[RMDB]
RNA sequence: GGGAACGACUCGAGUAGAGUCGAAAAGAUAUGGACGUUGAUGUUUCGCAGGGUUAGCUCGGAAACGAGCACAACCCUGAACUACGAAAUAAGACGUCCUAAGUCAAAAGUUGGCUUCGGCCAACAAGUAUAGCUAUGUGUUCGCACAUAGCUAUACAAAAGAAACAACAACAACAAC
Reactivity to DMS in 0.01 (KOAc 150mM, MgCl2 10mM, bicine 150mM(pH8.5), 24C), signal-to-noise 6, nucleotides 027 to 126: g000a060u010a300u010g010g000a020c000g020u010u000g010a160u020g020u000u000u000c000g010c000a000g000g000g000u000u000a170g010c000u000c000g040g010a110a090a180c010g000a000g010c010a050c140a020a020c000c000c000u000g000a030a040c180u000a300c020g000a020a000a010u010a140a300g000a010c010g000u000c000c000u010a020a070g000u000c030a100a070a090a110g010u000u000g010g000c000u000u010c200g040g010c000c000a010a010c000a050a100
Reactivity to 2A3 in 0.01 (KOAc 150mM, MgCl2 10mM, bicine 150mM(pH8.5), 24C), signal-to-noise 5, nucleotides 027 to 126: g030a020u090a060u160g010g000a010c020g000u000u030g070a190u300g040u010u010u000c030g020c010a000g000g010g020u020u030a020g010c010u000c010g000g030a100a090a060c020g000a000g000c020a050c060a040a010c000c000c000u010g000a000a000c010u110a050c020g000a010a000a000u040a050a030g010a010c020g000u000c000c000u000a010a010g020u010c010a000a010a050a210g000u010u000g010g000c010u060u090c290g120g000c010c000a010a010c000a010a000